[RMDB]
RNA sequence: GGGAACGACUCGAGUAGAGUCGAAAACAUUGCAUUCAGAAUUGUGGCAAAGGGCCACCAUGCUCUUAAGACUCAAGUCUAUUUUCCACACUGUCCAGAGGAGAGAAGUUAUCCUAGUAGCUUCUACCCUAACUCCUAUCUUCGGAUAGGAGUUAGGAAAAGAAACAACAACAACAAC
Reactivity to 2A3 in 0.01 (KOAc 150mM, MgCl2 10mM, bicine 150mM(pH8.5), 24C), signal-to-noise 4, nucleotides 027 to 126: c040a050u060u200g030c020a040u030u140c040a030g040a170a180u110u090g040u030g030g000c060a060a140a200g090g070g010c010c020a030c030c010a060u140g010c020u000c000u070u050a080a030g030a040c010u030c170a080a020g020u000c010u050a140u060u070u030u000c020c000a020c020a000c040u070g040u080c020c040a030g010a030g120g030a070g000a010g020a090a010g020u020u050a030u060c020c050u040a060g040u020a010g050c000u020u010c010u050a060c000
Reactivity to DMS in 0.01 (KOAc 150mM, MgCl2 10mM, bicine 150mM(pH8.5), 24C), signal-to-noise 4, nucleotides 027 to 126: c080a110u010u010g010c060a080u000u010c090a080g010a110a080u020u010g020u020g000g010c180a100a080a070g000g020g020c020c100a090c130c230a050u010g010c000u000c020u000u000a070a110g020a060c010u000c110a080a100g000u000c020u000a140u010u000u000u000c010c030a060c070a060c080u010g000u010c040c060a070g000a090g010g000a150g010a050g000a030a060g000u000u000a030u000c080c070u000a120g020u010a050g020c030u000u000c020u000a140c170
Chemical mapping of a 177-nucleotide RNA with 2A3 and DMS. For 2A3, 4,449 sequencing reads were counted. DMS adducts were read by reverse transcription with MarathonRT. It was measured as part of the RMDB library OK2TST.